[RMDB]
RNA sequence: GGGAACGACUCGAGUAGAGUCGAAAAGAACCAAGGCUGGAAGGCAUAGAACUGGCACCUUGGGACCAGGCAUAAUGGCUCACACCUAUAAUCCCAGUAUUUUGGGAGGCUGAGGUGGGAGAAUCACUUGAGUCCUGGAGUUGGAGAACAGCCUGGAAAAUGGAAAAUAUUUCGAUAUUUUCCAUUUAAAAGAAACAACAACAACAAC
Reactivity to 2A3 in 0.01 (KOAc 150mM, MgCl2 10mM, bicine 150mM(pH8.5), 24C), signal-to-noise 1, nucleotides 027 to 156: g040a040a030c000c000a010a040g030g000c120u050g110g090a070a030g070g080c040a050u080a070g180a140a060c050u040g060g040c020a040c070c000u010u080g000g000g000a000c010c010a000g000g000c050a080u090a090a050u220g030g000c000u000c010a020c000a000c010c000u020a040u020a130a020u000c020c000c000a030g050u070a300u180u300u270u010g010g000g000a010g000g010c090u090g160a000g000g020u000g000g010g000a010g000a070a020u120c020a000c000u050u060g030a020g050u070c000c020u010g010g010a050g000u120u080g010g010a080g040a040a040c000a010g000c000c000u020g000g020a040
Reactivity to DMS in 0.01 (KOAc 150mM, MgCl2 10mM, bicine 150mM(pH8.5), 24C), signal-to-noise 2, nucleotides 027 to 156: g010a160a110c030c010a040a090g000g010c030u000g030g030a190a080g030g000c060a110u010a170g000a160a150c040u010g010g000c170a060c030c020u010u000g000g020g010a070c000c000a020g010g010c050a130u000a050a050u010g000g050c020u010c000a030c040a020c000c000u000a070u000a200a240u000c010c000c000a060g000u000a170u020u030u000u010g010g020g020a010g000g010c290u010g010a020g040g020u000g010g000g030a050g010a040a060u010c060a060c070u000u000g010a100g040u010c010c000u000g020g000a100g020u020u000g010g010a190g000a060a080c050a090g010c030c000u050g030g000a080
An RNA of 207 nucleotides, treated with 2A3 and DMS and read out base by base.
It was measured as part of the RMDB library OK3TST.
Reactivities are given for positions 27 through 156.
For DMS the reverse transcriptase was MarathonRT.
The 2A3 profile rests on 528 reads.
2A3 adducts were read by reverse transcription with SuperScript II with manganese.